[RMDB]
RNA sequence: GGGAACGACUCGAGUAGAGUCGAAAAUUCUGCGCCAAACGCGUGGUUUGAUUGUGGCCGGGCGCAAUCGAUGACCGGCGGGUGGGUCUCAACGUCGGGGUUAACAGUGCCGCGGGCGCGGAACUGGUCGGUAACGGUAUUUCGAUACCGUUACCGAAAAAGAAACAACAACAACAAC
Reactivity to DMS in 0.01 (KOAc 150mM, MgCl2 10mM, bicine 150mM(pH8.5), 24C), signal-to-noise 2, nucleotides 027 to 126: u020u010c000u000g010c000g000c020c040a110a090a300c150g000c100g030u020g000g010u010u010u010g000a090u010u010g010u000g010g000c000c000g020g000g030c000g020c040a060a010u020c040g000a090u010g000a100c000c020g010g010c040g000g000g020u080g000g030g000u000c100u010c050a120a090c040g000u000c010g010g000g030g000u000u010a070a100c110a070g020u010g020c030c050g010c120g020g000g000c060g020c020g000g000a020a020c120u000g020g020
Reactivity to 2A3 in 0.01 (KOAc 150mM, MgCl2 10mM, bicine 150mM(pH8.5), 24C), signal-to-noise 3, nucleotides 027 to 126: u030u020c000u000g000c000g000c030c020a130a090a050c070g010c010g050u050g020g050u070u060u150g050a080u000u030g010u040g060g000c020c000g000g040g010c010g000c050a010a020u020c050g100a100u110g050a060c000c000g020g000c060g030g040g100u280g010g050g090u070c090u010c040a040a050c020g040u050c040g020g030g000g000u040u020a110a050c020a030g050u000g120c000c000g010c010g050g000g010c040g000c000g000g000a030a040c030u070g070g010
Record summary: Chemical mapping of a 177-nucleotide RNA with DMS and 2A3. In probing experiments dimethyl sulfate is read out at A N1 and C N3, which are open when not base-paired. The DMS profile rests on 3,619 reads. The reactions ran in a buffer of 150 mM KOAc, 10 mM MgCl2 and 150 mM bicine (pH 8.5), at 24 C.